RNA sequence: GGGAACGACUCGAGUAGAGUCGAAAACGUAGAUACUUCGGUAUCUACGAAAAUAACGCUGGCGUGGGACACAGCCGGAGCUAGCCUCGGAUAGUCUCAGUAAAACAGCAUGGUUCGCCAUGCUGAACAACCACACGUUGUUCGCAACGUGUGGUUGAAAAGAAACAACAACAACAAC
Reactivity to DMS in 0.01 (KOAc 150mM, MgCl2 10mM, bicine 150mM(pH8.5), 24C), signal-to-noise 2, nucleotides 027 to 126: c000g010u000a020g000a000u000a010c000u000u010c150g030g000u000a000u010c020u010a000c000g000a010a070a040a050u000a130a110c110g010c050u000g000g010c140g040u010g000g000g000a070c060a060c030a070g000c020c030g030g000a080g010c040u000a140g030c050c030u000c100g000g000a140u000a040g010u000c000u000c000a120g000u000a020a040a050a220c020a000g000c000a010u000g000g010u000u030c250g000c000c000a030u000g000c050u000g000a060a030
Reactivity to 2A3 in 0.01 (KOAc 150mM, MgCl2 10mM, bicine 150mM(pH8.5), 24C), signal-to-noise 2, nucleotides 027 to 126: c000g000u020a020g000a000u010a020c010u020u050c280g090g000u020a010u010c000u000a000c010g000a000a010a000a000u040a030a050c070g010c080u070g020g000c040g080u050g020g030g000a000c000a000c030a110g000c030c060g120g010a020g050c060u090a020g020c010c000u010c010g080g000a070u060a130g020u000c010u010c040a050g040u160a000a110a030a060c020a000g000c000a010u020g000g000u040u080c150g070c050c000a010u000g000c030u000g000a000a020

An RNA of 177 nucleotides, treated with DMS and 2A3 and read out base by base. The reactions ran in a buffer of 150 mM KOAc, 10 mM MgCl2 and 150 mM bicine (pH 8.5), at 24 C. For 2A3, 2,036 sequencing reads were counted. For 2A3 the reverse transcriptase was SuperScript II with manganese. Values cover nucleotides 27 to 126. Source: RMDB library M2PK50, as collected in RNAgym.